Background:
Conditions: 150 mM KOAc, 10 mM MgCl2 and 150 mM bicine (pH 8.5), 24 C. An RNA of 177 nucleotides, treated with 2A3 and DMS and read out base by base. For DMS the reverse transcriptase was MarathonRT.
RNA sequence: GGGAACGACUCGAGUAGAGUCGAAAAGGGCAGUUUUAUUUGACGACGGAAAGGCUACCAUAGUAUCCGAGGUAGCAGGAUACGCCGCCGUAGUUUUUUUAUUAUGGCGGUUCGUCGUUGCUGCCCAGGGCGCAGGCUUCUUCGGGAGUCUGUGCCCAAAAGAAACAACAACAACAAC
Reactivity to 2A3 in 0.01 (KOAc 150mM, MgCl2 10mM, bicine 150mM(pH8.5), 24C), signal-to-noise 9, nucleotides 027 to 126: g000g010g000c020a020g010u060u070u110u170a270u090u190u190g020a000c000g000a000c000g040g070a120a050a030g140g000c000u010a010c000c000a060u070a110g160u140a170u140c130c090g050a060g040g000u000a000g000c010a000g060g040a040u080a080c060g000c000c000g000c000c000g000u000a000g000u000u010u020u020u040u060u100a050u020u000a010u010g010g000c000g000g000u010u040c000g000u000c000g000u000u040g000c000u000g000c000c000c000a000
Reactivity to DMS in 0.01 (KOAc 150mM, MgCl2 10mM, bicine 150mM(pH8.5), 24C), signal-to-noise 5, nucleotides 027 to 126: g010g010g020c000a010g000u010u040u040u010a070u020u030u010g020a010c010g020a020c000g010g020a100a140a120g000g000c010u000a010c010c020a090u020a200g010u030a100u040c190c090g000a160g000g010u000a000g000c000a030g000g000a200u030a100c280g010c020c000g010c000c000g000u000a000g000u000u000u030u040u030u050u020a000u010u000a000u000g010g010c000g000g000u000u000c000g000u000c000g010u000u000g000c010u000g000c000c000c000a050